[RMDB]
RNA sequence: GGGAACGACUCGAGUAGAGUCGAAAAUCGCUAACCGCCAACUCACUUUCAAACUACGCUGCGAGUUGUGAGCGUAAUGUCAGUGAUCUGACGGCAAAGGUCACGGAUUUCGUCGAGCAGAUGGACGACGGAGGAACCUAUUCGUAGGUUCCUCCGUAAAAGAAACAACAACAACAAC
Reactivity to DMS in 0.01 (KOAc 150mM, MgCl2 10mM, bicine 150mM(pH8.5), 24C), signal-to-noise 2, nucleotides 027 to 126: u020c010g010c050u010a120a150c020c040g030c000c010a060a070c060u000c020a010c050u000u010u000c070a050a050a140c220u000a000c020g010c040u000g000c060g000a130g040u000u030g030u010g030a070g000c000g000u000a020a080u000g020u010c040a030g000u000g000a000u010c030u000g010a050c010g010g030c130a060a100a070g000g000u000c030a050c110g030g000a090u000u000u000c030g040u000c020g000a110g000c090a090g000a030u000g010g010a080c040g000
Reactivity to 2A3 in 0.01 (KOAc 150mM, MgCl2 10mM, bicine 150mM(pH8.5), 24C), signal-to-noise 2, nucleotides 027 to 126: u010c020g000c130u020a070a000c030c000g000c000c000a000a050c000u030c020a010c040u040u080u050c060a100a140a090c030u050a010c030g040c020u070g150c070g130a200g210u190u120g050u300g100a020g000c000g010u010a050a030u050g020u000c010a000g020u030g010a010u020c020u040g060a030c000g000g060c110a150a060a000g110g000u060c020a010c100g040g060a070u030u120u050c020g000u000c010g020a060g070c030a100g090a200u180g060g070a000c030g000